[RMDB]
RNA sequence: GGGAACGACUCGAGUAGAGUCGAAAAGGACGGAUAGAAGCGCGCGGACAGGUUCUGCCGCACCUUCGGGUCCUCGAGCGGCAUCUGCUGCAGAUCGAGCACCGUCUGGUAGAACGGCGUGACGAAACACUACUGAGCAUUUCGAUGCUCAGUAGUGAAAAGAAACAACAACAACAAC
Reactivity to DMS in 0.01 (KOAc 150mM, MgCl2 10mM, bicine 150mM(pH8.5), 24C), signal-to-noise 5, nucleotides 027 to 126: g000g000a030c050g010g000a160u010a120g000a030a050g030c180g040c070g020c010g010g010a060c110a060g010g020u010u010c050u010g020c010c000g010c040a030c030c020u000u000c020g000g020g010u000c140c010u000c040g010a090g010c020g020g010c020a170u020c150u010g010c020u000g020c030a100g010a300u010c010g010a120g000c150a180c010c000g010u000c010u010g010g000u010a050g010a080a050c050g000g000c080g020u000g010a140c060g000a140a100a140
Reactivity to 2A3 in 0.01 (KOAc 150mM, MgCl2 10mM, bicine 150mM(pH8.5), 24C), signal-to-noise 2, nucleotides 027 to 126: g010g010a010c040g010g050a080u120a200g050a070a020g010c050g000c020g000c010g090g060a100c060a060g090g090u160u060c010u040g010c000c000g050c020a030c000c000u010u040c000g060g000g010u000c020c020u000c000g040a020g000c000g020g000c040a150u070c140u300g000c010u020g000c010a030g020a170u080c000g010a000g000c030a000c020c000g020u040c070u040g010g060u060a050g000a080a010c000g020g010c020g070u080g020a020c030g030a040a030a010
Structure probing data (DMS and 2A3) for a 177-nucleotide construct. The RNA was probed in 150 mM KOAc, 10 mM MgCl2 and 150 mM bicine (pH 8.5) at 24 C.